The record gives the reactivity of an RNA of 177 nucleotides to DMS and 2A3. Conditions: 150 mM KOAc, 10 mM MgCl2 and 150 mM bicine (pH 8.5), 24 C.

[RMDB]
RNA sequence: GGGAACGACUCGAGUAGAGUCGAAAACAAAUGGUCGUCGUGCCGGCGAUGAGUACCAGCGCGACUGCCGAAAUGGCGAAGGUCAGUUUCACGGUACUCCCCCUCGAGAAGACGGGUGAAAGGGCCAACUCCGAUUAGUGUUCGCACUAAUCGGAGUAAAAGAAACAACAACAACAAC
Reactivity to DMS in 0.01 (KOAc 150mM, MgCl2 10mM, bicine 150mM(pH8.5), 24C), signal-to-noise 2, nucleotides 027 to 126: c050a080a090a090u020g020g010u000c130g000u000c000g030u010g020c040c070g050g000c100g010a090u020g000a070g010u000a040c050c020a240g020c020g040c040g010a000c010u000g000c040c000g000a080a100a050u000g010g010c060g000a140a130g020g010u010c010a020g000u000u000u000c020a050c070g010g000u000a100c040u000c010c000c010c010c030u010c120g000a110g010a060a080g010a070c090g010g000g030u010g010a040a070a020g000g000g010c020c030a090
Reactivity to 2A3 in 0.01 (KOAc 150mM, MgCl2 10mM, bicine 150mM(pH8.5), 24C), signal-to-noise 1, nucleotides 027 to 126: c040a010a030a070u200g060g000u010c020g010u010c020g050u030g010c040c000g040g010c030g080a150u150g070a010g010u020a030c020c000a000g010c020g000c000g000a010c030u030g000c000c010g070a080a100a120u260g040g020c080g090a090a030g040g010u030c030a130g040u000u020u040c050a040c030g010g020u040a000c000u000c050c020c000c000c020u200c090g080a080g040a170a000g040a050c030g020g000g010u010g050a080a030a050g010g000g040c000c000a000